[RMDB]
RNA sequence: GGGAACGACUCGAGUAGAGUCGAAAACGGUAUUGGUCAAGGCUAUACCGACAGCGCACCUUCAAAAGGGCGCUUAAUCCCCGGCCAACCGCCGAAAUAUGAAUAGACACCGCUGGGCUGGUAGGGCAAAACAUGGCGAUCUUCGGAUCGCCAUGAACCAUCAAUUUUACUUCGGUAAAAUUGAUGGAAAAGAAACAACAACAACAAC
Reactivity to DMS in 0.01 (KOAc 150mM, MgCl2 10mM, bicine 150mM(pH8.5), 24C), signal-to-noise 1, nucleotides 027 to 156: c000g020g030u000a010u020u010g060g040u010c020a110a080g070g000c050u010a110u020a040c050c020g020a190c070a070g020c040g000c000a040c020c000u000u000c160a120a090a120a050g020g000g000c020g000c040u000u090a020a050u010c000c010c020c060g020g000c010c030a170a030c030c040g060c000c000g010a070a150a110u000a080u010g010a080a240u010a270g000a110c020a060c070c060g000c040u010g020g030g000c030u020g030g000u000a000g010g010g000c050a060a110a090a240c000a020u000g010g000c000g000a010u000c000u000u000c280g000g030a040u000c000g010c010c000a010u000g020a020a150
Reactivity to 2A3 in 0.01 (KOAc 150mM, MgCl2 10mM, bicine 150mM(pH8.5), 24C), signal-to-noise 3, nucleotides 027 to 156: c020g000g030u040a050u080u170g030g020u080c060a100a080g110g010c000u010a000u010a040c030c000g010a030c060a010g000c000g000c040a300c090c000u090u170c090a060a100a040a010g000g000g020c000g000c000u000u010a000a010u010c020c000c000c000g010g000c020c000a080a050c020c010g010c000c010g090a100a060a020u200a050u090g080a070a040u080a120g060a050c070a010c040c060g020c050u060g000g030g000c010u020g000g040u030a060g010g000g030c030a030a000a000a040c000a010u000g000g000c020g010a000u010c010u020u020c040g080g020a000u010c020g000c000c010a000u000g000a000a000